[RMDB]
RNA sequence: GGGAACGACUCGAGUAGAGUCGAAAAAGGGCAGGGUGAAAUUGCCGAUCGGCGGUAAAGUCCGCGAGCCGAACGAAAAAGGUUUGGCAGGAACCGGUGAGAUUCCGGUACCGACAGUAUAGUCUGGAUGACCACUUCAGCUUCGGCUGAAGUGGAACCUUACUAUCCUCUUCGGAGGAUAGUAAGGAAAAGAAACAACAACAACAAC
Reactivity to 2A3 in 0.01 (KOAc 150mM, MgCl2 10mM, bicine 150mM(pH8.5), 24C), signal-to-noise 3, nucleotides 027 to 156: a000g040g010g000c030a020g050g020g000u080g050a030a090a150u090u050g000c000c030g020a110u060c010g000g000c000g000g010u010a000a000a000g000u000c000c000g000c000g000a010g000c000c000g000a000a010c010g090a110a090a090a030a060g090g000u000u000u000g000g000c000a000g000g030a000a000c000c000g010g000u000g010a010g000a000u000u000c000c010g000g000u000a000c000c000g000a000c000a000g020u030a050u060a150g050u000c080u060g080g080a120u090g090a050c000c000a000c000u000u000c000a000g000c010u030u090c220g100g000c000u010g000a000a000g000u000g000g000a000a000
Reactivity to DMS in 0.01 (KOAc 150mM, MgCl2 10mM, bicine 150mM(pH8.5), 24C), signal-to-noise 3, nucleotides 027 to 156: a100g020g010g040c040a050g030g030g020u000g000a070a070a120u000u000g000c000c020g000a120u000c040g020g010c020g000g000u000a120a150a070g020u000c010c010g030c020g000a300g020c010c010g040a020a090c000g020a050a190a170a220a210g010g000u000u000u000g010g040c040a070g020g020a030a020c010c000g000g030u010g000a250g010a300u010u010c000c010g000g010u000a010c010c010g020a040c050a050g010u010a110u000a110g020u000c030u010g010g010a150u000g010a190c000c010a000c000u000u010c000a010g010c000u000u010c300g050g000c000u000g010a010a020g010u000g010g000a000a010